The data come from the RNA Mapping Database (RMDB), library OK1LIB.
The record gives the reactivity of an RNA of 177 nucleotides to DMS and 2A3.
The DMS profile rests on 1,997 reads.
The reactions ran in a buffer of 150 mM KOAc, 10 mM MgCl2 and 150 mM bicine (pH 8.5), at 24 C.
For DMS the reverse transcriptase was MarathonRT.

RNA sequence: GGGAACGACUCGAGUAGAGUCGAAAAGAUUGCAUUAGUCAUACAGAUGUUGAAGAAAAUCAUACCGAAACAACUCAUUUUUGUGUGAUUGAUAAGGAAGGUAAUAUUGCUUCAUUUACGACAUCAACAUAGCGUUGCAGUUCGCUGCAACGCUAUGAAAAGAAACAACAACAACAAC
Reactivity to DMS in 0.01 (KOAc 150mM, MgCl2 10mM, bicine 150mM(pH8.5), 24C), signal-to-noise 2, nucleotides 027 to 126: g010a150u020u000g000c080a060u000u030a020g000u000c020a090u020a120c260a080g000a000u000g000u000u000g010a170a120g000a130a080a060a010u000c030a020u000a020c000c040g000a040a100a040c230a030a190c150u030c200a300u000u000u000u000u000g000u000g050u040g030a050u000u010g000a300u040a030a040g010g000a060a090g030g010u010a060a190u090a110u080u000g030c010u000u000c000a040u000u000u000a170c090g000a030c010a000u000c040a020a160
Reactivity to 2A3 in 0.01 (KOAc 150mM, MgCl2 10mM, bicine 150mM(pH8.5), 24C), signal-to-noise 3, nucleotides 027 to 126: g060a030u130u220g020c030a040u040u240a070g040u140c040a030u100a240c050a110g030a000u000g020u040u040g050a160a120g050a000a080a000a000u020c000a010u040a030c000c070g000a020a020a020c080a050a030c030u050c180a040u000u040u020u040u170g010u040g000u010g000a030u080u000g050a060u040a150a070g170g020a020a040g000g050u150a050a070u180a250u220u210g010c020u000u000c010a140u030u080u020a050c040g010a030c020a000u040c000a000a040